[RMDB]
RNA sequence: GGGAACGACUCGAGUAGAGUCGAAAACUAUUGUGGUUCGCCACAAUAGGCAGGGCUGAUUUUCUCGCUGACUUUCAGCCCCAAACAAAAAAGUCAGCAUAAUUGUACUGCGCUUCGGCGCAGUAAAUCACAGUAUGUAUUUCGAUACAUACUGUGAAAAAGAAACAACAACAACAAC
Reactivity to 2A3 in 0.01 (KOAc 150mM, MgCl2 10mM, bicine 150mM(pH8.5), 24C), signal-to-noise 6, nucleotides 027 to 126: c000u000a000u010u000g000u010g030g050u030u070c210g060c060c000a000c000a000a000u000a000g010g030c070a060g000g000g000c000u010g000a020u020u000u020u020c120u070c110g000c000u000g000a010c000u010u010u010c000a000g010c000c000c010c040a020a020a010c010a000a000a000a000a010a000g010u000c000a000g010c000a000u070a020a030u070u130g040u060a000c000u010g000c010g010c010u020u070c240g070g000c000g000c000a000g000u000a000a000a000
Reactivity to DMS in 0.01 (KOAc 150mM, MgCl2 10mM, bicine 150mM(pH8.5), 24C), signal-to-noise 6, nucleotides 027 to 126: c010u000a000u000u000g020u000g000g010u000u010c220g010c000c000a010c000a010a000u000a000g000g010c210a150g000g010g020c010u000g000a040u000u000u000u000c060u010c220g010c000u000g010a010c000u000u000u000c000a000g000c000c000c000c130a000a010a200c030a000a010a010a010a010a020g020u000c000a000g020c000a090u010a040a080u010u010g010u000a010c000u000g000c000g010c010u000u010c210g020g010c010g000c000a000g010u000a000a050a090